[RMDB]
The record gives the reactivity of an RNA of 177 nucleotides to 2A3 and DMS.

RNA sequence: GGGAACGACUCGAGUAGAGUCGAAAAUUGUAAUCAAUUGCUUUGAGCUCUAACAGCUGGCGGUGUUGGGGCGAAUUGAACAACACAUUGUGGGAAUUAGUGUGGUUAAUCCGUCUUCACUUACGCAAGCAAGUUAUUGUUUCGACAAUAACUUGCUAAAAGAAACAACAACAACAAC
Reactivity to 2A3 in 0.01 (KOAc 150mM, MgCl2 10mM, bicine 150mM(pH8.5), 24C), signal-to-noise 2, nucleotides 027 to 126: u070u030g010u130a080a040u190c040a050a050u080u090g060c020u140u100u140g080a030g020c020u000c010u050a090a080c040a050g050c040u050g040g000c070g030g040u040g000u070u080g030g000g000g000c020g030a010a000u010u070g030a060a020c020a020a010c000a020c040a090u100u170g050u120g100g160g070a060a070u110u060a070g010u020g030u030g080g000u030u040a020a020u030c000c010g000u020c000u040u040c040a120c040u060u210a010c060g040c100a060
Reactivity to DMS in 0.01 (KOAc 150mM, MgCl2 10mM, bicine 150mM(pH8.5), 24C), signal-to-noise 3, nucleotides 027 to 126: u000u000g010u010a110a180u010c060a050a030u000u000g010c130u010u000u020g010a120g020c050u000c060u010a070a080c150a090g020c030u000g000g020c100g020g000u000g020u010u000g000g030g000g010c020g000a010a020u000u000g010a060a040c030a040a040c060a040c040a090u000u010g030u010g010g010g010a130a100u000u000a050g020u000g010u000g000g010u010u000a030a020u000c020c020g000u000c000u000u010c040a050c040u010u000a100c130g020c090a080
For DMS the reverse transcriptase was MarathonRT.
2A3 adducts were read by reverse transcription with SuperScript II with manganese.
The RNA was probed in 150 mM KOAc, 10 mM MgCl2 and 150 mM bicine (pH 8.5) at 24 C.
Reactivities are given for positions 27 through 126.
Source: RMDB library OK2TRN, as collected in RNAgym.